[RMDB]
Chemical mapping of a 177-nucleotide RNA with DMS and 2A3. The DMS profile rests on 6,270 reads. For 2A3 the reverse transcriptase was SuperScript II with manganese. The data come from the RNA Mapping Database (RMDB), library OK2TRN. The RNA was probed in 150 mM KOAc, 10 mM MgCl2 and 150 mM bicine (pH 8.5) at 24 C.
RNA sequence: GGGAACGACUCGAGUAGAGUCGAAAACGGCUCGGACACUACCGCACGCAUGGUGUUCAGCUCGAUGCGAUACUCCGUCAGGUUGUCCAUGUACAGUGCGGCGCCGAGGCCGGCGACCGCCAGCAGCGCUCUGUAGAUGAUUCGUCAUCUACAGAGCAAAAGAAACAACAACAACAAC
Reactivity to DMS in 0.01 (KOAc 150mM, MgCl2 10mM, bicine 150mM(pH8.5), 24C), signal-to-noise 5, nucleotides 027 to 126: c070g000g010c010u000c030g020g010a170c130a100c110u010a090c040c020g010c030a020c010g010c020a100u010g010g000u020g000u010u000c020a040g010c000u000c050g010a040u000g000c130g020a180u020a100c190u000c050c010g010u010c020a050g010g000u010u000g000u010c010c010a050u000g000u000a130c180a150g010u000g020c010g010g000c160g000c000c000g010a060g000g010c030c000g000g000c050g000a140c050c030g020c050c060a100g010c140a110g000c150
Reactivity to 2A3 in 0.01 (KOAc 150mM, MgCl2 10mM, bicine 150mM(pH8.5), 24C), signal-to-noise 4, nucleotides 027 to 126: c010g000g020c000u010c030g000g060a050c070a030c110u190a040c010c010g020c010a010c010g040c010a010u010g040g000u090g100u180u130c010a010g000c020u040c040g010a020u060g010c080g060a030u070a300c090u080c070c020g030u020c010a020g000g030u030u010g020u000c010c010a000u030g020u030a070c090a120g010u010g020c000g000g000c020g000c000c000g010a050g050g170c000c000g000g020c010g060a080c000c030g040c030c040a050g020c020a010g060c020